[RMDB]
RNA sequence: GGGAACGACUCGAGUAGAGUCGAAAAGAUAUGGAGAAUCAGCAUCGAUCUUGCCCUCGGAAACGAGGGUCAAGGGAGCUGUGGCUCCUAAGUCAAACUGAACCACGACUUCGGUCGUGGUUCAGAACCCAAUAGGACAGUUCGCUGUCCUAUUGGGAAAAGAAACAACAACAACAAC
Reactivity to DMS in 0.01 (KOAc 150mM, MgCl2 10mM, bicine 150mM(pH8.5), 24C), signal-to-noise 3, nucleotides 027 to 126: g000a020u000a200u020g010g000a030g000a210a060u000c000a010g020c000a280u000c260g010a080u010c000u000u000g000c000c000c000u000c000g010g010a050a050a090c000g020a020g010g000g010u010c010a000a010g030g040g010a090g010c000u000g000u000g010g010c010u010c000c010u000a030a070g000u000c010a130a120a210c000u000g000a000a010c000c000a000c000g010a040c000u000u010c180g020g000u000c010g030u000g000g000u000u000c010a000g000a060a110
Reactivity to 2A3 in 0.01 (KOAc 150mM, MgCl2 10mM, bicine 150mM(pH8.5), 24C), signal-to-noise 2, nucleotides 027 to 126: g000a020u050a010u070g010g010a010g020a050a120u060c010a010g010c040a110u300c210g280a220u070c060u010u000g000c000c010c000u000c000g010g030a000a010a000c000g000a000g020g010g010u000c000a010a010g000g070g030a040g000c000u020g010u090g090g080c000u000c000c000u000a040a000g030u010c020a000a060a210c020u000g020a000a010c020c000a010c000g000a000c000u100u140c300g050g000u000c000g010u000g000g000u020u010c000a000g010a000a000